Record summary
The record gives the reactivity of an RNA of 207 nucleotides to 2A3. The RNA was probed in 150 mM KOAc, 10 mM MgCl2 and 150 mM bicine (pH 8.5) at 24 C.
[RMDB]
RNA sequence: GGGAACGACUCGAGUAGAGUCGAAAAUGGGAAAUGUCUCAAGGAACCUGGGGAACAGUCCUGGGUGAGAAUCCCUGUGCCUGGGGGAACCUCACUGUUUCUCAGAGGUCAGGCUCCAGGCCUCUUAACUCUCUGUCCAGUGCUGGACUCUUGACCACUGAUUACGUCAGUUCGCUGACGUAAUCAGAAAAGAAACAACAACAACAAC
Reactivity to 2A3 in 0.01 (KOAc 150mM, MgCl2 10mM, bicine 150mM(pH8.5), 24C), signal-to-noise 1, nucleotides 027 to 156: u120g010g000g030a070a160a130u140g030u050c010u000c050a060a050g100g050a050a050c050c050u100g000g000g000g000a050a150c050a060g040u040c000c010u010g000g010g050u020g010a010g010a020a020u080c040c040c000u020g050u150g000c020c020u010g000g010g010g000g120a000a000c000c000u030c010a070c050u080g120u180u210u050c120u010c040a060g010a010g070g000u050c060a050g090g130c000u020c000c020a010g000g030c010c000u070c000u010u080a070a040c000u010c000u000c050u080g060u060c000c050a030g030u070g200c040u000g010g040a050c000u000c010u010u110g090a080c010c010a030
The data come from the RNA Mapping Database (RMDB), library OK3TST.